Record summary
An RNA of 207 nucleotides, treated with 2A3 and read out base by base. Conditions: 150 mM KOAc, 10 mM MgCl2 and 150 mM bicine (pH 8.5), 24 C.
RNA sequence: GGGAACGACUCGAGUAGAGUCGAAAAAGGCUGUAAUGGCUUUCUGGUGGGAUGGGAUACGUUGGGAAUUUUGGCCGAGGAACAAAUCCUUCCUCGCGGCCAGACACGGACUGCACGCCCUUUGGGCAAGGGAUGGUUCUCCAUCUCGCACCGUGCCGUACGGAGAAAUGUUCGCAUUUCUCCGUACAAAAGAAACAACAACAACAAC
Reactivity to 2A3 in 0.01 (KOAc 150mM, MgCl2 10mM, bicine 150mM(pH8.5), 24C), signal-to-noise 1, nucleotides 027 to 156: a000g020g000c040u070g020u160a020a140u210g000g000c000u060u100u050c130u060g050g040u110g080g000g060a120u150g020g030g000a020u070a180c030g060u070u140g030g000g070a110a110u020u120u040u020g000g000c000c010g010a000g000g030a010a010c040a090a240a140u130c030c060u010u000c000c000u030c020g040c070g020g000c020c000a000g000a000c000a000c000g060g040a130c190u060g000c030a010c080g020c020c020c000u080u150u280g010g000g020c020a040a030g030g020g000a000u030g010g070u240u090c130u040c070c000a000u000c010u030c010g010c000a000c000c000g000u000g030c020c040
For 2A3 the reverse transcriptase was SuperScript II with manganese. Values cover nucleotides 27 to 156.